[RMDB]
RNA sequence: GGGAACGACUCGAGUAGAGUCGAAAAGCGUUAGCUAGUGAUAUUUUUGACACUCCUAGCGUACUUCAAGCUACUCUUUCUGAGUUUUCACACUUAGCUACCUUUGCUGAGUUGGAAGCUGCGCAGAGCGCAGACUAAAGUUCGCUUUAGUCUGCGCAAAAGAAACAACAACAACAAC
Reactivity to DMS in 0.01 (KOAc 150mM, MgCl2 10mM, bicine 150mM(pH8.5), 24C), signal-to-noise 7, nucleotides 027 to 126: g010c020g000u000u000a040g010c070u000a020g010u000g010a110u000a040u000u010u000u020u010g000a140c060a020c020u010c300c000u000a010g000c010g020u010a040c160u000u000c060a090a110g000c030u000a030c020u000c010u010u000u000c050u010g010a040g000u000u000u000u000c000a030c170a010c010u000u000a010g010c000u000a100c300c170u010u010u000g010c010u000g000a020g010u000u000g000g000a030a020g000c010u000g030c140g010c160a080g010a090
Reactivity to 2A3 in 0.01 (KOAc 150mM, MgCl2 10mM, bicine 150mM(pH8.5), 24C), signal-to-noise 7, nucleotides 027 to 126: g000c000g010u010u020a000g000c090u020a010g010u010g060a100u040a190u230u220u100u140u260g090a030c000a000c010u000c010c000u000a000g000c000g000u010a030c040u030u080c030a040a020g020c010u030a020c000u010c000u030u110u030c030u070g030a010g010u000u010u010u010c030a060c000a000c050u040u010a010g000c000u070a120c040c100u170u190u090g000c000u000g000a010g010u000u000g010g000a010a000g000c010u070g100c110g000c070a010g020a010
An RNA of 177 nucleotides, treated with DMS and 2A3 and read out base by base. For DMS, 6,803 sequencing reads were counted. DMS adducts were read by reverse transcription with MarathonRT. It was measured as part of the RMDB library 15KREP. The reactions ran in a buffer of 150 mM KOAc, 10 mM MgCl2 and 150 mM bicine (pH 8.5), at 24 C. Values cover nucleotides 27 to 126.